[RMDB]
RNA sequence: GGGAACGACUCGAGUAGAGUCGAAAAGAUAUGGAGCCUGAUAUGGAGAUGUGUGGGUCGGAAACGACCCACCAUCUAUGAAGUAUAGGCUCCUAAGUCAAAAGCCAUAGUCUUCGGACUAUGGCAAGUCUUAUACUUUCUUCGGAAAGUAUAAGACAAAAGAAACAACAACAACAAC
Reactivity to 2A3 in 0.01 (KOAc 150mM, MgCl2 10mM, bicine 150mM(pH8.5), 24C), signal-to-noise 3, nucleotides 027 to 126: g020a000u040a020u130g000g010a000g000c000c010u100g120a020u010a010u100g120g040a210g010a110u010g300u070g010u010g110g010g000u010c010g000g020a140a030a020c010g000a000c000c020c010a000c000c010a000u000c000u010a090u050g010a000a000g000u010a010u040a040g010g000c000u000c000c000u000a010a000g020u000c010a010a050a170a090g000c020c000a000u000a000g010u000c020u040u100c300g150g000a000c000u010a010u000g000g010c000a000a000
Reactivity to DMS in 0.01 (KOAc 150mM, MgCl2 10mM, bicine 150mM(pH8.5), 24C), signal-to-noise 6, nucleotides 027 to 126: g000a040u000a300u010g000g000a010g020c000c000u000g010a050u000a010u000g000g000a050g010a000u000g010u020g040u000g010g000g020u000c000g010g010a070a070a150c000g010a020c010c000c000a000c010c000a000u000c000u000a170u010g000a140a230g010u000a010u000a040g010g000c010u000c000c000u000a000a060g000u010c020a110a100a140a150g000c000c000a000u000a010g010u000c000u000u020c300g020g000a030c000u000a000u000g000g010c000a010a010